[RMDB]
RNA sequence: GGGAACGACUCGAGUAGAGUCGAAAAGGGAAUCUGCCAAAGGUUAUCACUUGCGCGCUUGUUUCUACCGUCACAACAUUGCACCAUGUUCCACACCUUAGAUUCAAACGUAUUCGGCUUAGCGAGCAAGUUAUCGCGGCUUCGGCCGCGAUAACUUAAAAGAAACAACAACAACAAC
Reactivity to 2A3 in 0.01 (KOAc 150mM, MgCl2 10mM, bicine 150mM(pH8.5), 24C), signal-to-noise 1, nucleotides 027 to 126: g000g020g020a100a050u000c000u050g030c180c090a000a070a000g080g050u050u210a040u220c000a020c000u000u070g000c090g020c000g020c000u090u160g120u030u060u000c050u050a070c000c080g040u150c060a020c000a250a140c000a040u100u200g070c000a060c000c010a030u050g000u020u000c020c000a060c010a060c040c000u030u030a030g000a060u200u090c070a000a070a070c050g060u140a000u070u040c000g070g000c050u010u010a000g040c000g010a000g000c010

The record gives the reactivity of an RNA of 177 nucleotides to 2A3.
The 2A3 profile rests on 329 reads.
The RNA was probed in 150 mM KOAc, 10 mM MgCl2 and 150 mM bicine (pH 8.5) at 24 C.
The data come from the RNA Mapping Database (RMDB), library OK1LIB.
2A3 adducts were read by reverse transcription with SuperScript II with manganese.